[RMDB]
RNA sequence: GGGAACGACUCGAGUAGAGUCGAAAAGAUAUGGAACUACACUCCGAUAAGCCAUGAUCGGAAACGAUCACUGGCUUUUGACGGAGACUGUAGUUCCUAAGUCAAAACGAGUCCUUCGGGACUCGAAGUAUUAUGUAUACUUCGGUAUACAUAAUACAAAAGAAACAACAACAACAAC
Reactivity to 2A3 in 0.01 (KOAc 150mM, MgCl2 10mM, bicine 150mM(pH8.5), 24C), signal-to-noise 6, nucleotides 027 to 126: g010a000u060a040u150g000g000a000a000c000u010a000c010a010c010u000c010c020g090a130u050a180a000g000c000c000a010u010g000a000u000c000g020g040a080a050a020c010g000a000u010c000a030c290u020g000g000c000u010u010u010u030g040a020c010g000g000a020g030a010c060u030g000u010a000g000u000u000c000c000u000a010a000g010u000c030a030a020a090a140c020g000a000g000u000c000c000u060u120c300g160g000g000a000c010u000c010g000a010a000
Reactivity to DMS in 0.01 (KOAc 150mM, MgCl2 10mM, bicine 150mM(pH8.5), 24C), signal-to-noise 9, nucleotides 027 to 126: g000a040u000a300u010g000g010a000a000c000u000a000c000a090c000u000c000c000g030a170u000a010a010g010c000c000a060u000g000a010u000c010g010g000a100a080a180c000g010a010u000c000a000c300u000g010g000c000u000u000u000u000g010a270c130g000g000a020g000a060c240u000g010u000a010g010u000u000c000c000u000a010a070g010u000c030a080a070a110a220c020g010a020g010u000c000c000u000u010c240g040g000g000a000c000u000c000g000a010a080

Overview:
Chemical mapping of a 177-nucleotide RNA with 2A3 and DMS. 2A3 adducts were read by reverse transcription with SuperScript II with manganese. The RNA was probed in 150 mM KOAc, 10 mM MgCl2 and 150 mM bicine (pH 8.5) at 24 C.